[RMDB]
RNA sequence: GGGAACGACUCGAGUAGAGUCGAAAAGGAGAAGUUUAUAGACGGAACAAACCUGAAUUACCAACCGUUACUUUAGACGAAAACGGACUGUUUAUAAAUGAUUUUAGGGUGCCUUAUGUACUUGAGGCCUCAUUCUACAAUUCGUUGUAGAAUGAGGAAAAGAAACAACAACAACAAC
Reactivity to 2A3 in 0.01 (KOAc 150mM, MgCl2 10mM, bicine 150mM(pH8.5), 24C), signal-to-noise 5, nucleotides 027 to 126: g090g030a090g020a180a150g050u040u040u060a040u040a020g040a020c030g020g040a080a010c050a050a060a050c010c020u060g050a100a100u120u030a100c020c010a060a040c030c000g030u030u020a030c040u140u170u160a140g050a110c070g070a090a050a050a030c020g000g040a060c020u020g030u020u050u000a050u030a020a050a050u080g050a080u040u070u120u210a080g050g010g040u060g010c000c020u120u080a080u130g060u060a050c050u080u080g050a020g070g030
Reactivity to DMS in 0.01 (KOAc 150mM, MgCl2 10mM, bicine 150mM(pH8.5), 24C), signal-to-noise 6, nucleotides 027 to 126: g010g010a150g000a150a170g000u000u010u000a020u000a070g020a010c030g010g000a100a120c120a060a140a140c070c030u000g020a070a100u010u010a180c050c060a080a130c070c060g020u000u010a110c100u010u000u010a070g000a110c210g010a040a040a040a070c060g000g020a300c060u000g000u010u000u000a050u020a010a030a050u010g000a130u000u000u000u000a100g020g000g020u000g000c020c050u000u010a030u000g020u000a060c130u000u000g010a080g000g000
Structure probing data (2A3 and DMS) for a 177-nucleotide construct. For 2A3, 4,461 sequencing reads were counted. It was measured as part of the RMDB library OK2TRN.